[RMDB]
RNA sequence: GGGAACGACUCGAGUAGAGUCGAAAAGCAACUCAUUUCCCCAUUAGACGUUCUGAGAACACGUGCACCAGCUUCCAAGCUUUCUCCCUCCCGAACCGCCCUGAUUAGUGUGUGAAGAACUGGCACAAUUGAUCCGUGCAUUCGUGCACGGAUCAAUAAAAGAAACAACAACAACAAC
Reactivity to DMS in 0.01 (KOAc 150mM, MgCl2 10mM, bicine 150mM(pH8.5), 24C), signal-to-noise 2, nucleotides 027 to 126: g040c110a040a090c040u000c050a070u000u000u010c000c000c000c180a260u070u000a110g000a210c090g000u000u000c000u050g000a130g010a130a130c160a050c060g030u040g000c050a130c000c010a020g000c020u000u000c020c010a050a070g030c060u000u000u020c030u010c020c040c000u040c060c040c000g010a000a030c060c000g000c020c020c000u000g000a070u060u010a050g010u000g000u000g000u030g020a140a150g030a050a000c020u010g000g070c040a060c060a050
Reactivity to 2A3 in 0.01 (KOAc 150mM, MgCl2 10mM, bicine 150mM(pH8.5), 24C), signal-to-noise 2, nucleotides 027 to 126: g040c020a030a070c020u010c060a080u030u020u080c000c000c000c000a110u020u100a030g030a030c010g050u040u020c000u120g170a050g000a080a000c030a050c100g030u060g020c000a000c030c060a000g050c000u070u000c040c020a090a020g050c000u050u060u000c040u050c000c020c000u010c030c000c000g000a030a000c020c000g070c000c000c000u010g090a040u090u020a050g020u030g000u010g040u090g040a030a000g020a030a070c060u080g060g000c010a030c010a080

Structure probing data (DMS and 2A3) for a 177-nucleotide construct. The data come from the RNA Mapping Database (RMDB), library RFM100.